[RMDB]
RNA sequence: GGGAACGACUCGAGUAGAGUCGAAAACCAGAUUCUCGCGUGGACAACGACGACACCGUGCACGUGGUGGAGCUAUAUCGAGAGUCGAUGGGCGUGGCAUUGCCCAAAGAACACACCUUGACGCUGCUGGACGUGGUAGAGCCAAGUGAUCUUGAUACGUGGUAAUCCAUUUCGAUGGAUUACCACGAAAAGAAACAACAACAACAAC
Reactivity to 2A3 in 0.01 (KOAc 150mM, MgCl2 10mM, bicine 150mM(pH8.5), 24C), signal-to-noise 1, nucleotides 027 to 156: c020c000a000g070a040u130u020c000u010c070g000c000g010u000g000g080a100c050a120a080c090g160a030c120g090a050c070a090c080c030g070u100g040c070a020c070g000u010g000g050u120g040g010a040g050c000u040a060u010a060u110c010g050a000g000a000g040u040c040g000a030u000g000g040g000c000g040u050g270g000c120a150u230u300g000c000c000c010a000a000a000g030a030a040c070a000c010a070c050c000u050u140g000a010c080g030c020u000g000c000u000g040g090a120c140g030u070g020g010u000a010g000a000g000c000c040a070a070g000u030g030a130u020c020u010u090g060a090u110a120